[RMDB]
RNA sequence: GGGAACGACUCGAGUAGAGUCGAAAAUAUAAAUAAAUUCCCUGUUAACGGAAAGAGGGUUUGCAAAUCCGACGUCGUGAGACACGGACCUCAUGGGAAGAAGAAGCAACUUUAGUGUUAGAGAGAUCCAAGUUUAAGUAUUCGUACUUAAACUUGGAAAAGAAACAACAACAACAAC
Reactivity to DMS in 0.01 (KOAc 150mM, MgCl2 10mM, bicine 150mM(pH8.5), 24C), signal-to-noise 4, nucleotides 027 to 126: u040a180u020a080a100a150u000a040a060a160u010u000c000c010c000u030g000u000u020a040a080c140g000g000a020a070a120g000a030g000g010g000u000u010u020g030c060a040a160a170u000c010c000g010a130c180g010u010c050g010u040g010a130g010a080c050a080c130g000g000a110c150c020u010c030a050u000g000g010g000a100a080g000a030a040g000a160a090g000c050a030a030c070u000u000u010a080g020u020g000u000u000a050g010a130g020a080g000a150u000
Reactivity to 2A3 in 0.01 (KOAc 150mM, MgCl2 10mM, bicine 150mM(pH8.5), 24C), signal-to-noise 6, nucleotides 027 to 126: u070a000u040a020a120a000u130a060a070a060u020u010c000c000c000u010g100u040u120a110a050c050g060g050a110a080a050g080a070g040g040g020u050u180u190g130c050a060a060a030u000c010c010g050a090c070g030u050c010g010u060g060a030g000a030c050a020c050g060g030a050c010c010u040c040a040u080g010g020g030a030a050g040a020a000g020a050a010g020c020a020a030c000u050u120u160a140g030u080g030u100u080a070g010a010g000a010g000a100u000